[RMDB]
RNA sequence: GGGAACGACUCGAGUAGAGUCGAAAAGAAAGGCAGCUAGUGCAGCCCACGCAGAGGCAUGCUUUUGCAUGCCCAGUCGAGCCCACGACUGAGGGCAGCUGCGGCACUGAGGGCAGCUGCCGAAAGAAAUAGGUAAAUACUUCGGUAUUUACCUAUUAAAAGAAACAACAACAACAAC
Reactivity to 2A3 in 0.01 (KOAc 150mM, MgCl2 10mM, bicine 150mM(pH8.5), 24C), signal-to-noise 6, nucleotides 027 to 126: g110a030a090a010g010g000c010a010g000c020u090a030g080u060g120c030a020g010c030c030c010a060c050g100c050a040g030a050g100g000c010a010u010g000c010u210u280u200u300g000c000a000u000g000c000c000c000a000g000u000c000g010a010g000c000c000c010a040c010g010a010c010u030g030a070g040g080g000c010a020g010c030u070g020c000g040g000c050a030c100u110g070a150g010g020g000c010a000g000c000u000g000c000c000g000a000a010a000g040a000
Reactivity to DMS in 0.01 (KOAc 150mM, MgCl2 10mM, bicine 150mM(pH8.5), 24C), signal-to-noise 9, nucleotides 027 to 126: g010a110a130a160g000g010c010a010g010c000u000a060g030u000g010c070a120g000c020c060c050a150c160g010c130a090g010a130g010g000c000a010u000g010c000u010u000u000u010g020c010a010u000g000c000c000c010a000g000u000c000g000a170g010c000c000c000a300c010g000a030c010u000g000a170g010g000g030c070a140g010c050u000g010c080g010g010c150a060c070u000g000a080g000g000g010c010a050g000c010u000g010c000c010g000a020a060a090g000a070